[RMDB]
RNA sequence: GGGAACGACUCGAGUAGAGUCGAAAAGAUACUGUGUGCGCGAUCCUAUGGCCUGAUCUGCUCAGUAUACAUGGUACGGCGCCAGGAUCAGUCGGCCCAGGCCGAUGUACGUAGCGCGUACCAGUACGCCAGACAUUUAGUUCGCUAAAUGUCUGGCAAAAGAAACAACAACAACAAC
Reactivity to DMS in 0.01 (KOAc 150mM, MgCl2 10mM, bicine 150mM(pH8.5), 24C), signal-to-noise 2, nucleotides 027 to 126: g010a160u010a020c010u010g000u020g000u010g000c050g000c030g030a160u010c140c030u000a060u000g010g000c040c020u000g010a030u000c070u000g020c050u010c050a110g000u010a060u000a090c140a080u000g010g050u000a040c040g000g020c090g000c100c100a060g000g010a030u010c070a170g010u000c010g010g000c000c030c250a180g010g030c000c000g000a010u000g010u010a090c050g000u000a060g010c020g000c000g020u010a010c000c000a000g010u000a030c100
Reactivity to 2A3 in 0.01 (KOAc 150mM, MgCl2 10mM, bicine 150mM(pH8.5), 24C), signal-to-noise 3, nucleotides 027 to 126: g020a030u030a020c010u020g040u020g030u030g210c030g000c040g040a070u060c010c040u090a100u120g060g000c020c030u040g000a090u040c050u090g000c020u010c090a030g020u050a030u020a120c150a090u140g040g020u010a010c030g050g090c050g010c050c030a030g030g010a070u080c030a030g070u020c000g010g040c020c040c030a140g070g070c010c000g010a040u090g050u080a060c030g020u020a010g000c000g000c000g000u010a010c000c000a000g000u000a020c060